[RMDB]
RNA sequence: GGGAACGACUCGAGUAGAGUCGAAAAGAUAUGGAUGAGGGACAUGCUCUGAACCUUACGAAGAACGUUGACUCGGAAACGAGUCAACGGGAGUAAGGCAUGAGAGCAACAGCCCUCAUCCUAAGUCGAGCUUAAAUUGGUUCGCCAAUUUAAGCUCAAAAGAAACAACAACAACAAC
Reactivity to 2A3 in 0.01 (KOAc 150mM, MgCl2 10mM, bicine 150mM(pH8.5), 24C), signal-to-noise 1, nucleotides 027 to 126: g040a010u110a000u160g000g000a020u000g010a000g000g040g030a030c120a260u060g000c000u010c000u000g090a100a110c010c010u010u000a010c010g300a300a070g000a060a000c000g020u010u040g000a010c000u010c000g000g030a060a080a040c000g000a020g000u010c000a010a000c030g000g000g000a010g020u020a000a010g000g000c060a170u300g060a040g000a010g050c020a020a040c040a000g040c000c000c000u000c000a000u000c010c000u000a000a000g010u020c120
Reactivity to DMS in 0.01 (KOAc 150mM, MgCl2 10mM, bicine 150mM(pH8.5), 24C), signal-to-noise 1, nucleotides 027 to 126: g010a090u030a210u010g000g020a000u000g000a010g030g020g000a030c080a240u000g030c030u000c000u000g000a260a170c000c000u000u010a020c020g010a190a170g070a200a190c010g000u020u000g020a020c010u000c000g010g020a030a090a130c020g000a020g020u000c000a000a000c000g000g000g020a060g000u000a000a040g000g030c090a160u000g040a200g000a020g020c000a000a090c280a200g020c010c000c000u000c000a000u000c000c000u000a030a060g070u000c060